The record gives the reactivity of an RNA of 207 nucleotides to DMS and 2A3. Source: RMDB library ARCHII, as collected in RNAgym.

RNA sequence: GGGAACGACUCGAGUAGAGUCGAAAACGGGGUUGGAUGGGACUUCUACCGCUGACUGGGCCCAUCAUCCGGAUGUGUUCGUCCUAGCCGGAGGGCCAAGCAGAGAUCGCUGCACGAACUGCGCACGGAGAAGCCCUGGCAAAGUAGCGUAGGACCCGACCUAUUGAUGGUUCGCCAUCAAUAGGUCAAAAGAAACAACAACAACAAC
Reactivity to DMS in 0.01 (KOAc 150mM, MgCl2 10mM, bicine 150mM(pH8.5), 24C), signal-to-noise 1, nucleotides 027 to 156: c070g050g020g030g050u010u030g000g000a170u000g000g010g020a130c040u000u010c000u000a070c020c050g000c020u000g000a120c030u010g000g050g010c010c000c040a150u010c110a300u000c020c010g020g010a140u000g000u010g010u000u000c160g010u000c090c070u000a090g000c010c020g000g020a220g010g000g000c040c010a010a010g020c020a020g010a090g030a160u020c080g010c030u010g040c020a240c100g000a080a230c010u010g000c000g020c050a090c090g000g000a170g000a050a070g050c010c000c010u010g000g020c090a130a050a090g010u000a060g040c080g010u000a140g010g030a190c020c090c040
Reactivity to 2A3 in 0.01 (KOAc 150mM, MgCl2 10mM, bicine 150mM(pH8.5), 24C), signal-to-noise 2, nucleotides 027 to 156: c010g020g010g040g000u020u040g020g050a090u070g010g040g000a090c000u010u000c000u080a250c020c030g060c080u040g040a240c020u020g000g030g000c000c000c010a050u210c050a060u030c000c000g010g000a010u010g130u020g020u080u160c130g030u130c080c040u050a090g080c010c010g010g010a060g000g000g000c000c010a020a060g000c020a000g050a010g010a040u100c050g020c060u110g000c040a020c170g030a120a080c000u010g020c010g020c030a040c040g000g010a000g000a010a010g000c020c000c000u010g000g000c000a060a060a050g000u100a010g020c020g060u040a040g010g140a040c000c000c000